[RMDB]
RNA sequence: GGGAACGACUCGAGUAGAGUCGAAAAGGUAACUAGGAGUUUGCAGUGACGUAAGUUUCGUCCUAAAAGGACUCAUCAGGUAGCCUAAUAGACUACGACUUACGCGGUAGGUCGUGAAUACGCCCGGGUCUCAGAAAUGGUUCGCCAUUUCUGAGACAAAAGAAACAACAACAACAAC
Reactivity to DMS in 0.01 (KOAc 150mM, MgCl2 10mM, bicine 150mM(pH8.5), 24C), signal-to-noise 1, nucleotides 027 to 126: g010g010u000a100a100c010u000a140g000g000a060g030u000u000u010g010c290a030g000u000g000a050c020g010u000a080a220g030u000u010u000c040g030u000c000c010u000a030a040a190a130g010g000a030c030u000c020a090u000c150a080g000g000u000a290g010c000c000u010a030a100u000a190g000a140c100u000a040c020g000a030c000u000u000a010c000g010c210g000g000u000a030g000g040u000c010g030u000g000a040a030u000a020c170g020c000c000c010g010g040
Reactivity to 2A3 in 0.01 (KOAc 150mM, MgCl2 10mM, bicine 150mM(pH8.5), 24C), signal-to-noise 1, nucleotides 027 to 126: g000g000u090a050a030c010u070a060g000g080a000g000u000u050u130g010c110a030g000u010g290a010c010g030u080a180a180g050u100u230u170c030g000u060c010c010u070a100a070a000a030g090g000a010c000u010c000a090u070c070a030g020g010u080a040g000c010c020u020a070a000u150a070g040a010c030u030a010c090g010a000c020u000u100a020c110g030c160g300g000u010a030g000g000u010c000g010u010g070a030a090u200a070c080g080c030c010c000g070g090